[RMDB]
RNA sequence: GGGAACGACUCGAGUAGAGUCGAAAAAGACAGAACAAGAUUCGUCCAGGCGAGUGAAUUCAUCAGGUUUGAGGGGAACUUGAUAAAUAGUUGCAGCCAAAAGUUCCGCCCCUUGAUACAAAAUGUAAGCAUUGAAUAUAUUCGUAUAUUCAAUGCUAAAAGAAACAACAACAACAAC
Reactivity to 2A3 in 0.01 (KOAc 150mM, MgCl2 10mM, bicine 150mM(pH8.5), 24C), signal-to-noise 3, nucleotides 027 to 126: a000g040a020c050a040g050a060a020c070a190a040g050a250u030u070c020g010u000c020c020a030g020g000c000g020a040g090u120g090a040a050u050u040c030a020u020c010a010g030g040u020u080u120g030a010g000g010g000g000a010a010c000u000u020g000a000u030a050a080a020u100a030g120u110u120g010c010a010g020c020c000a020a030a010a070g000u020u020c000c010g040c020c000c000c000u010u050g050a080u090a190c070a040a110a100a040u140g100u180a090
Reactivity to DMS in 0.01 (KOAc 150mM, MgCl2 10mM, bicine 150mM(pH8.5), 24C), signal-to-noise 5, nucleotides 027 to 126: a100g010a040c030a070g020a070a040c060a090a110g010a300u000u000c040g010u000c010c050a070g020g000c030g000a090g030u000g010a130a060u000u000c040a040u000c020a010g010g010u000u010u010g010a040g010g000g000g020a060a020c010u000u000g010a000u000a030a040a030u000a080g010u000u000g010c040a170g020c020c030a070a070a060a120g010u000u000c010c020g000c020c000c010c030u000u000g000a110u010a070c150a050a060a090a060u010g010u010a090

The data come from the RNA Mapping Database (RMDB), library OK2TST.
This 177-nucleotide RNA was probed chemically with 2A3 and DMS.
DMS adducts were read by reverse transcription with MarathonRT.
Reactivities are given for positions 27 through 126.